[RMDB]
RNA sequence: GGGAACGACUCGAGUAGAGUCGAAAAUCUUCUUCUCCACGCGCCGCUUCUUGAUGGCCUUUUGCAGCAGCUUGGUGUCGUCCUUGACCUUCUUGCCCUCGACCUUGUCGAAUGCGUUGCGCCAGGCCCAUACUGAUUAGUUCGCUAAUCAGUAUGGAAAAGAAACAACAACAACAAC
Reactivity to DMS in 0.01 (KOAc 150mM, MgCl2 10mM, bicine 150mM(pH8.5), 24C), signal-to-noise 6, nucleotides 027 to 126: u020c040u000u020c030u010u000c050u010c020c020a080c110g010c050g010c040c020g010c040u000u020c030u010u000g000a090u020g010g000c020c040u010u000u020u030g010c050a070g030c070a100g010c020u000u000g000g020u010g010u010c020g000u000c030c020u000u010g000a090c060c030u010u000c040u010u010g000c030c030c020u010c030g000a050c050c060u000u040g030u010c040g000a080a070u020g010c060g000u010u010g010c040g000c110c020a040g010g000c130
Reactivity to 2A3 in 0.01 (KOAc 150mM, MgCl2 10mM, bicine 150mM(pH8.5), 24C), signal-to-noise 9, nucleotides 027 to 126: u030c010u120u010c000u040u010c030u020c020c010a040c030g040c020g020c010c010g030c020u060u030c020u050u170g060a100u120g070g010c000c020u060u120u080u130g050c050a060g000c010a010g000c020u060u100g040g010u060g050u060c030g020u020c010c000u040u090g070a100c010c000u050u050c020u040u100g040c000c010c000u030c020g040a070c010c050u050u130g050u080c020g030a070a050u110g030c030g040u040u050g020c010g020c020c000a030g030g020c000
Structure probing data (DMS and 2A3) for a 177-nucleotide construct. DMS adducts were read by reverse transcription with MarathonRT. It was measured as part of the RMDB library OK1LIB. The reactions ran in a buffer of 150 mM KOAc, 10 mM MgCl2 and 150 mM bicine (pH 8.5), at 24 C. For 2A3, 56,732 sequencing reads were counted.